This 207-nucleotide RNA was probed chemically with 2A3 and DMS.
2A3 adducts were read by reverse transcription with SuperScript II with manganese.
The reactions ran in a buffer of 150 mM KOAc, 10 mM MgCl2 and 150 mM bicine (pH 8.5), at 24 C.
The data come from the RNA Mapping Database (RMDB), library OK3TST.
Values cover nucleotides 27 to 156.
High DMS reactivity at an A or C suggests that its Watson-Crick edge is free.
DMS adducts were read by reverse transcription with MarathonRT.

RNA sequence: GGGAACGACUCGAGUAGAGUCGAAAACUUCGAUCUCGACUCUAGUCCUGAAGAGCUAGUCUCCUCUUCCUGACUGAAGUCUCCUGAUCGAUCGACUAGAGAGAGAGUCCUAGCUCUGAUCCUCUUCCUAGAGCUCUCUGAAGGAGAGAGAUCGAAGCAGUCCUUAGAAGUUCGCUUCUAAGGACUGAAAAGAAACAACAACAACAAC
Reactivity to 2A3 in 0.01 (KOAc 150mM, MgCl2 10mM, bicine 150mM(pH8.5), 24C), signal-to-noise 4, nucleotides 027 to 156: c010u000u000c000g000a020u010c010u000c030g130a120c030u000c010u030a020g040u040c020c070u050g060a030a010g010a000g010c020u050a030g070u010c020u010c040c020u030c010u090u060c030c050u070g080a100c050u080g060a160a020g050u010c020u090c030c060u100g060a150u100c060g070a080u050c040g040a060c040u080a030g020a010g010a000g000a000g010a010g110u020c000c030u010a030g000c020u000c000u060g060a080u050c010c020u050c030u140u080c000c010u030a020g000a020g030c000u010c010u000c030u090g150a150a050g060g000a030g010a000g000a010g000a010u000c000g000a010a000g000
Reactivity to DMS in 0.01 (KOAc 150mM, MgCl2 10mM, bicine 150mM(pH8.5), 24C), signal-to-noise 2, nucleotides 027 to 156: c020u000u010c040g020a030u000c010u000c020g020a060c040u010c010u020a080g000u010c020c020u010g000a190a050g000a030g000c000u000a080g000u000c030u000c140c000u020c010u000u000c020c010u010g000a220c100u000g000a070a060g010u000c030u000c070c060u000g020a130u000c020g010a110u010c040g010a170c020u000a030g020a110g020a040g010a060g000a020g020u000c090c020u000a090g030c030u010c050u000g000a150u000c040c030u000c030u000u020c150c020u030a040g000a150g020c090u000c030u000c010u010g010a220a110g000g000a150g010a110g010a060g020a060u000c010g000a090a060g000